Source: RMDB libraries RFM100 and RFMREP, as collected in RNAgym. This 177-nucleotide RNA was probed chemically with 2A3 and DMS. The reactions ran in a buffer of 150 mM KOAc, 10 mM MgCl2 and 150 mM bicine (pH 8.5), at 24 C.

RNA sequence: GGGAACGACUCGAGUAGAGUCGAAAACGGGCAACACGCGGGCUACAAUGGCUCUGACAGUGGGAUGCAACGCCGAGAGGCGACGCUAAUCUCCAAACGGAGUCGUAGUUCGGAUUGCGGGCUGAAAGAUAAAGGCAAGGUUCGCCUUGCCUUUAUCAAAAGAAACAACAACAACAAC
Reactivity to 2A3 in 0.01 (KOAc 150mM, MgCl2 10mM, bicine 150mM(pH8.5), 24C), signal-to-noise 7, nucleotides 027 to 126: c010g040g070g010c010a030a010c030a020c170g300c010g030g000g000c000u010a000c030a100a210u300g010g000c000u010c000u020g030a020c040a060g050u300g090g000g000a000u020g010c000a020a040c000g010c000c010g050a060g010a030g040g000c030g010a010c070g000c010u030a070a020u000c020u000c010c000a060a070a080c020g010g000a000g000u010c020g010u020a010g010u000u020c000g010g010a010u010u070g000c020g000g040g040c060u110g060a100a070a010
Reactivity to DMS in 0.01 (KOAc 150mM, MgCl2 10mM, bicine 150mM(pH8.5), 24C), signal-to-noise 4, nucleotides 027 to 126: c100g000g010g020c010a040a030c100a100c090g010c040g010g000g010c010u000a010c020a230a150u030g010g020c010u000c000u000g000a100c130a090g000u050g000g000g010a030u000g000c010a070a230c020g000c000c000g010a240g000a270g000g000c000g000a020c300g000c020u010a130a040u000c000u000c000c020a100a140a090c030g000g000a000g000u010c000g010u000a010g000u000u010c000g010g000a130u000u010g010c020g000g000g010c060u010g010a040a090a140

Values cover nucleotides 27 to 126.